[RMDB]
Chemical mapping of a 177-nucleotide RNA with 2A3 and DMS. The DMS profile rests on 771 reads. Conditions: 150 mM KOAc, 10 mM MgCl2 and 150 mM bicine (pH 8.5), 24 C. Values are in units of 0.01, from 0 to 300, in steps of 10. Source: RMDB library OK2TST, as collected in RNAgym.
RNA sequence: GGGAACGACUCGAGUAGAGUCGAAAAUUCAACAGGCGUGAACUCGGUUUCAAACGGAGUAUCUUGCGCAAAAUGCAGAUGGUUAAUCCGUUUCGUCGGCACACGUACACCAUCGUUUAAAAUAAUAACUCAUGCAGCUAUUCGUAGCUGCAUGAGUAAAAGAAACAACAACAACAAC
Reactivity to 2A3 in 0.01 (KOAc 150mM, MgCl2 10mM, bicine 150mM(pH8.5), 24C), signal-to-noise 1, nucleotides 027 to 126: u020u010c010a010a010c020a070g230g000c010g000u000g000a040a000c030u000c100g090g000u030u210u220c140a040a010a000c040g030g000a000g010u040a110u110c060u090u160g000c020g000c070a030a000a000a080u210g000c090a020g000a060u030g000g080u070u070a040a050u040c000c030g000u110u120u010c110g100u080c020g020g060c040a020c010a010c070g040u050a070c000a000c030c030a040u080c020g010u050u080u120a100a140a020a020u140a060a070u080a080
Reactivity to DMS in 0.01 (KOAc 150mM, MgCl2 10mM, bicine 150mM(pH8.5), 24C), signal-to-noise 1, nucleotides 027 to 126: u000u010c050a060a130c150a240g000g010c000g000u000g010a040a070c100u010c040g000g030u000u000u000c250a060a050a010c020g000g000a000g000u000a050u000c060u010u000g040c030g010c150a090a010a090a070u020g000c090a030g000a010u000g010g010u000u000a020a120u000c050c010g030u000u020u000c050g020u000c050g000g000c300a140c060a000c090g000u010a130c170a080c040c040a020u010c140g010u000u000u000a040a090a050a040u010a060a080u010a060